[RMDB]
RNA sequence: GGGAACGACUCGAGUAGAGUCGAAAAAAUUAGAGGCAAUUUGAAAUAAUUUAAAUUAGCUCAACCCUACUGCACUUACCGAACUAGAUAACGGAGUAGUAGGGGUAAAUUCUCCGCAUUCGGUGCGCAACCACCUGAGGUUUCGACCUCAGGUGAAUCGUAUUCAGAACUUCGGUUCUGAAUACGAAAAAGAAACAACAACAACAAC
Reactivity to 2A3 in 0.01 (KOAc 150mM, MgCl2 10mM, bicine 150mM(pH8.5), 24C), signal-to-noise 1, nucleotides 027 to 156: a000a000u170u020a060g000a070g000g140c050a000a020u020u030u050g050a110a100a120u240a180a270u120u040u080a010a110a040u070u030a050g010c000u020c020a060a090c000c000c000u000a010c000u000g020c000a010c050u110u130a090c030c000g110a180a030c050u060a100g120a220u090a170a070c060g060g000a050g030u030a000g000u000a000g000g000g000g000u000a010a010a010u010u050c010u060c010c000g000c010a020u110u140c120g160g060u060g010c040g000c000a000a030c030c000a000c000c000u000g000a000g000g030u030u080u220c160g070a040c000c010u000c000a000g000g000u000g010a000a000